[RMDB]
RNA sequence: GGGAACGACUCGAGUAGAGUCGAAAAUCCGCAGCAUUCGUGCUGCGGAACUUACCGAGGUUGUUGCUCGGUAUAACAACAAAACCCUUCGAAACAAGGGAAACAAUGAGCUAUUCGUAGCUCAUAAAGUACACCGCUUAUUCGUAAGCGGUGUACUAAAAGAAACAACAACAACAAC
Reactivity to DMS in 0.01 (KOAc 150mM, MgCl2 10mM, bicine 150mM(pH8.5), 24C), signal-to-noise 1, nucleotides 027 to 126: u000c000c000g000c000a000g020c000a050u000u020c130g020u020g030c010u000g010c000g020g000a000a000c100u000u000a040c000c000g020a020g020g010u000u010g000u000u000g040c020u000c000g000g020u020a000u000a030a100c090a120a060c170a080a090a120a180c000c000c000u010u000c060g000a130a020a160c300a000a000g000g020g020a090a000a080c060a070a020u000g000a020g000c000u000a040u000u010c240g000u000a000g030c000u010c020a000u000a030a050
Description:
Structure probing data (DMS) for a 177-nucleotide construct. The DMS profile rests on 718 reads. The reactions ran in a buffer of 150 mM KOAc, 10 mM MgCl2 and 150 mM bicine (pH 8.5), at 24 C. It was measured as part of the RMDB library M2PK50.